[RMDB]
RNA sequence: GGGAACGACUCGAGUAGAGUCGAAAAUAGAGCGUCACACCUCUGUGGCGUCUAGUGUGUCCUUGACAAUCCUUGAAAAGCCGAAGGAUUUAAAAAGUCUUGCACUCAUCCGUACUCAUAUCCGCAUGAGUACGAGAGGAUUCGUCCUCUCGUACUCAAAAGAAACAACAACAACAAC
Reactivity to DMS in 0.01 (KOAc 150mM, MgCl2 10mM, bicine 150mM(pH8.5), 24C), signal-to-noise 2, nucleotides 027 to 126: u000a040g000a080g020c000g010u000c000a020c020a110c260c210u000c170u020g000u000g010g000c010g030u000c010u000a020g040u010g010u010g000u030c040c040u020u040g040a160c080a050a020u020c000c010u000u000g010a080a070a090a130g000c130c100g020a040a030g030g000a040u000u000u030a030a080a060a140a080g000u020c030u000u000g000c030a100c050u000c130a050u000c010c000g030u000a040c020u000c040a070u000a070u050c010c020g040c160a140u000
Reactivity to 2A3 in 0.01 (KOAc 150mM, MgCl2 10mM, bicine 150mM(pH8.5), 24C), signal-to-noise 5, nucleotides 027 to 126: u060a000g050a020g030c000g000u000c000a000c000a010c010c120u150c180u150g000u000g000g000c000g020u020c010u010a050g010u040g030u010g040u070c010c000u010u030g010a010c040a030a030u000c000c000u020u040g080a190a100a020a010g110c070c030g040a020a010g020g000a020u050u050u130a110a160a030a000a010g020u020c030u040u050g000c010a010c020u040c010a070u000c010c010g040u070a070c020u020c050a040u060a080u120c010c020g040c060a070u050